This 207-nucleotide RNA was probed chemically with DMS and 2A3. The DMS profile rests on 1,749 reads. The data come from the RNA Mapping Database (RMDB), library M2RFPK. 2A3 adducts were read by reverse transcription with SuperScript II with manganese.
RNA sequence: GGGAACGACUCGAGUAGAGUCGAAAACAGCAAAAAGGAACCGAUUCCCACCAAGUUCGGAAAGAGAUACUGGGCGAGGCGCUGAAGAAAGAAUCUCGCUUCAGACACCCCAAGGACUCGACUGAAGAAUGCACGCCAUCGUUCGCGAUGGCGUGAACAAAUCUAUUUUGUUCGCAAAAUAGAUUUGAAAAGAAACAACAACAACAAC
Reactivity to DMS in 0.01 (KOAc 150mM, MgCl2 10mM, bicine 150mM(pH8.5), 24C), signal-to-noise 1, nucleotides 027 to 156: c050a120g010c060a030a070a090a120a100g040g020a090a070c010c030g010a230u000u000c000c000c000a190c120c060a100a120g010u010u000c000g010g040a080a110a180g010a090g010a080u000a140c000u000g020g000g020c040g000a130g010g000c050g000c010u000g000a010a080g000a090a040a120g000a140a100u010c060u000c080g010c010u000u010c030a070g000a300c040a080c000c010c000c020a070a180g030g010a160c030u000c010g020a200c040u010g000a090a130g000a100a040u010g010c000a010c000g040c010c000a020u030c000g070u000u000c300g050c010g000a000u040g000g000c000g030u010g000a020a030
Reactivity to 2A3 in 0.01 (KOAc 150mM, MgCl2 10mM, bicine 150mM(pH8.5), 24C), signal-to-noise 3, nucleotides 027 to 156: c030a000g110c040a020a070a100a100a070g060g060a090a020c040c070g060a100u020u050c010c000c010a010c040c040a100a040g050u020u030c020g050g010a060a180a010g040a000g010a000u110a140c020u040g010g010g000c100g060a050g080g030c220g020c110u020g020a030a020g020a020a240a030g050a110a160u070c110u070c200g030c000u020u020c000a030g020a040c000a100c040c000c000c020a010a040g050g010a030c010u010c020g030a020c010u070g030a020a020g040a110a050u160g040c010a000c010g000c000c000a000u010c000g040u080u050c170g000c020g120a000u000g000g000c010g000u010g000a000a000